[RMDB]
RNA sequence: GGGAACGACUCGAGUAGAGUCGAAAAAAAAGAUAUGGAAUACCCUAAGCCAUGUGAGAGCUUGGAUUUAGCUCUCGGAAACGAGAGCUUGUCAGCUCCCAUGGCAAAGGGUAUUCCUAAGUCAAAACUAAGGAAAGUAGUUCGCUACUUUCCUUAGAAAAGAAACAACAACAACAAC
Reactivity to DMS in 0.01 (KOAc 150mM, MgCl2 10mM, bicine 150mM(pH8.5), 24C), signal-to-noise 3, nucleotides 027 to 126: a070a040a090a080g010a050u010a300u020g000g000a010a010u000a000c000c000c000u000a070a300g000c000c000a000u000g000u000g010a180g030a020g010c010u000u020g030g000a020u010u010u010a010g020c010u000c000u000c010g020g000a130a060a150c000g010a030g000a010g020c000u000u000g010u000c020a030g000c020u000c000c010c010a010u000g000g000c000a000a020a030g000g000g000u000a000u000u010c010c010u010a010a060g030u010c040a120a100a080a180
Reactivity to 2A3 in 0.01 (KOAc 150mM, MgCl2 10mM, bicine 150mM(pH8.5), 24C), signal-to-noise 2, nucleotides 027 to 126: a000a000a000a010g100a050u110a070u160g000g000a000a000u000a010c000c010c010u020a060a020g020c000c010a040u050g170u300g120a300g000a000g130c100u300u300g170g030a050u300u300u150a000g000c020u000c000u000c020g020g010a100a060a000c020g000a020g000a000g010c000u000u020g010u000c000a000g000c000u010c000c000c000a000u000g000g040c000a030a000a000g000g010g000u000a000u000u000c000c000u000a000a000g000u010c020a000a050a020a060